Notes: An RNA of 207 nucleotides, treated with DMS and 2A3 and read out base by base. DMS adducts were read by reverse transcription with MarathonRT. The reactions ran in a buffer of 150 mM KOAc, 10 mM MgCl2 and 150 mM bicine (pH 8.5), at 24 C. Reactivities are given for positions 27 through 156. For DMS, 1,528 sequencing reads were counted.
RNA sequence: GGGAACGACUCGAGUAGAGUCGAAAAGCCUCCUCGCUUCCAUAGAAAGGGGACGGGGCAGAUCGCAAGAGCUACAACCGAGCGGUGGUAUCUGUCAAACUAAGCAGCCACUGCACAUCAAUUGACUAAACGAUGCCGAUCUUCGGAUCGGCAUCAAGUACGCUACUAAGUUCGCUUAGUAGCGUACAAAAGAAACAACAACAACAAC
Reactivity to DMS in 0.01 (KOAc 150mM, MgCl2 10mM, bicine 150mM(pH8.5), 24C), signal-to-noise 1, nucleotides 027 to 156: g040c000c000u020c000c000u000c020g000c040u000u020c030c040a100u030a190g010a100a220a170g000g050g040g000a050c000g040g000g000g000c080a060g000a060u000c130g000c160a110a100g020a060g000c060u010a080c060a120a150c010c030g020a130g000c000g030g050u020g010g020u000a040u000c050u000g000u020c020a100a070a160c250u030a100a200g020c000a240g020c010c010a050c000u000g050c020a110c120a140u000c060a000a130u000u000g000a130c050u000a040a110a150c100g010a010u000g000c000c010g000a000u000c000u000u020c270g060g020a000u000c000g000g000c000a080u000c000a000a070
Reactivity to 2A3 in 0.01 (KOAc 150mM, MgCl2 10mM, bicine 150mM(pH8.5), 24C), signal-to-noise 3, nucleotides 027 to 156: g040c000c030u030c000c010u010c000g050c050u070u000c010c000a090u020a140g230a050a140a060g000g000g000g000a020c000g000g000g010g000c040a020g020a100u120c060g010c080a070a030g020a010g050c070u070a060c070a120a030c070c080g030a020g050c010g020g020u020g010g000u110a180u180c020u030g050u030c030a100a120a160c090u200a080a030g040c010a000g000c000c010a000c010u000g010c010a010c000a120u180c070a010a260u110u130g100a110c040u140a080a090a050c090g000a000u000g000c010c010g000a010u010c000u020u080c130g020g000a000u000c000g000g000c000a000u000c000a000a000
For 2A3, 1,343 sequencing reads were counted.